This 207-nucleotide RNA was probed chemically with 2A3. For 2A3 the reverse transcriptase was SuperScript II with manganese. The reactions ran in a buffer of 150 mM KOAc, 10 mM MgCl2 and 150 mM bicine (pH 8.5), at 24 C.
[RMDB]
RNA sequence: GGGAACGACUCGAGUAGAGUCGAAAACAUUACGAAUUCAGUCGCAAAUUGUAGAAUUAGCUACUCUACGAUUUAGUGAGCGUUAGUAACGUUGUAAUAUAAUAUAGUCUUUGGGAGGAUUAUAUUGGAGCCGCGGACAAGUUCGCUUGUCCGCGAACACGCAAUGAAGGUUCGCCUUCAUUGCGUGAAAAGAAACAACAACAACAAC
Reactivity to 2A3 in 0.01 (KOAc 150mM, MgCl2 10mM, bicine 150mM(pH8.5), 24C), signal-to-noise 3, nucleotides 027 to 156: c010a020u100u230a010c050g140a090a120u150u140c040a040g070u020c000g000c020a010a000a000u010u000g000u000a010g010a000a070u050u010a040g000c030u060a020c010u010c000u000a000c000g010a000u010u000u100a060g010u040g040a080g090c000g010u030u060a040g030u020a060a050c000g000u010u030g030u020a140a110u090a090u040a170a010u000a000u000a000g010u000c060u040u100u180g090g060g010a050g070g000a000u010u010a010u020a030u030u030g070g030a040g060c060c010g000c000g000g020a000c000a000a000g000u020u070c130g030c180u000u000g010u000c010c000g000c000g000a000a000